[RMDB]
RNA sequence: GGGAACGACUCGAGUAGAGUCGAAAACUAUUGAACAGCUGCUUUAUGCGAUCCAACAACUGUAUACUGGGUUCCAGGGAAAGCAAAUCCUUGGCAGUACCAUGUUGGAAGAUGAAUUCACACCUGACGACCAUCAAGUUCGCUUGAUGGAAAAGAAACAACAACAACAAC
Reactivity to DMS in 0.01 (KOAc 150mM, MgCl2 10mM, bicine 150mM(pH8.5), 24C), signal-to-noise 9, nucleotides 027 to 129: c060u010a090u060u060g020a090a070c040a070g000c060u020g010c080u060u060u040a060u050g020c050g040a080u050c020c030a020a060c020a040a060c190u050g000u060a090u000a050c030u000g000g000g110u050u050c000c000a020g010g000g000a030a080a110g060c250a060a070a070u010c020c020u020u000g000g020c010a030g000u020a010c210c010a040u030g030u000u000g010g000a060a070g000a060u010g020a070a060u050u010c070a080c080a060c110c050u050g040a080c080g010a140
Reactivity to 2A3 in 0.01 (KOAc 150mM, MgCl2 10mM, bicine 150mM(pH8.5), 24C), signal-to-noise 9, nucleotides 027 to 129: c020u050a100u130u190g080a070a030c020a050g040c030u100g010c020u110u180u160a100u270g040c030g050a060u000c000c000a000a010c010a030a060c060u040g030u110a110u020a080c010u010g140g070g040u220u080c000c000a000g010g000g010a030a070a050g150c130a060a060a100u010c000c000u010u010g020g000c000a000g000u000a020c030c020a040u070g000u010u010g050g010a000a020g050a030u120g060a020a100u110u090c050a030c010a030c090c020u050g070a040c060g060a050